[RMDB]
RNA sequence: GGGAACGACUCGAGUAGAGUCGAAAAGGUGACGUUAUCGAAGAGGUUCUUCUUACUCUAGCUAAACUUUCUGGUCACAGUGUGACAAAUGAGCAACAGAAAGUAGUAGUCGCAGGCAUUACAGGACACAUGGACGCAGUGAUUGAUGGUCAUGUGACUUGAUUGCAAAGUUCGCUUUGCAAUCAAGAAAAGAAACAACAACAACAAC
Reactivity to DMS in 0.01 (KOAc 150mM, MgCl2 10mM, bicine 150mM(pH8.5), 24C), signal-to-noise 4, nucleotides 027 to 156: g020g040u000g010a070c030g000u000u010a100u010c060g010a120a210g000a100g000g010u000u010c020u000u010c030u010u000a110c070u010c050u000a120g010c050u010a110a080a080c010u010u000u000c000u000g000g010u010c060a120c030a170g020u010g020u000g000a160c150a080a090a090u020g010a130g020c040a040a190c000a010g000a040a030a020g010u000a060g020u000a070g030u000c050g020c150a070g010g030c000a060u000u000a030c040a120g040g010a140c000a020c090a070u000g040g010a050c190g010c030a070g010u000g020a110u010u010g010a080u000g000g000u000c020a050u000g010u000g000a160
Reactivity to 2A3 in 0.01 (KOAc 150mM, MgCl2 10mM, bicine 150mM(pH8.5), 24C), signal-to-noise 8, nucleotides 027 to 156: g030g010u020g020a020c040g040u110u120a120u200c130g060a100a020g000a030g030g000u040u020c000u020u000c010u010u070a080c040u040c050u110a040g030c030u060a080a030a070c000u030u010u000c010u040g040g000u010c010a030c040a240g200u110g020u010g210a020c020a020a160a130u270g040a090g050c040a030a060c000a010g010a000a010a000g010u040a030g020u020a010g020u020c070g020c180a030g020g000c010a010u020u060a020c040a070g070g040a010c010a000c010a060u080g030g020a010c040g010c070a010g010u040g100a110u050u110g050a070u080g020g020u010c020a010u050g020u010g040a050

The record gives the reactivity of an RNA of 207 nucleotides to DMS and 2A3. DMS adducts were read by reverse transcription with MarathonRT. Conditions: 150 mM KOAc, 10 mM MgCl2 and 150 mM bicine (pH 8.5), 24 C. For 2A3 the reverse transcriptase was SuperScript II with manganese. For DMS, 7,672 sequencing reads were counted. It was measured as part of the RMDB library OK3TST.